Chemical mapping of a 177-nucleotide RNA with DMS and 2A3. Conditions: 150 mM KOAc, 10 mM MgCl2 and 150 mM bicine (pH 8.5), 24 C. For DMS, 1,200 sequencing reads were counted.
RNA sequence: GGGAACGACUCGAGUAGAGUCGAAAAGAGGGGAUAAGCAGAAGGAAGGAUGUUGCACUGGAUGGACAUAUGAUAGAAGUUCUGAACUAGUGUGGUAUGCACAUACACAGGAACUGACUCUUCAAAACGUAUCGCUGAUCUUCGGAUCAGCGAUACGAAAAGAAACAACAACAACAAC
Reactivity to DMS in 0.01 (KOAc 150mM, MgCl2 10mM, bicine 150mM(pH8.5), 24C), signal-to-noise 1, nucleotides 027 to 126: g000a070g000g080g000g000a030u000a130a090g020c070a000g000a070a040g000g000a200a020g000g090a030u000g090u000u000g000c030a070c040u000g050g040a000u000g020g000a000c110a040u070a050u000g000a110u120a010g000a100a070g000u000u000c020u040g000a100a120c240u010a120g000u000g080u000g010g040u000a040u040g000c090a080c060a040u060a020c170a030c080a270g000g000a010a030c000u000g000a060c070u000c050u070u000c100a030a120a080a160
Reactivity to 2A3 in 0.01 (KOAc 150mM, MgCl2 10mM, bicine 150mM(pH8.5), 24C), signal-to-noise 2, nucleotides 027 to 126: g010a000g060g010g000g000a030u000a130a000g000c090a000g000a120a000g160g000a000a000g000g010a010u000g080u130u030g030c180a050c050u000g000g060a070u040g000g000a010c120a070u300a050u200g070a060u070a030g060a060a000g000u050u010c000u050g030a080a000c060u020a210g070u000g000u040g190g120u140a080u300g060c070a060c010a070u140a000c040a000c030a200g040g020a030a000c000u030g060a000c060u060c120u110u100c050a000a090a000a090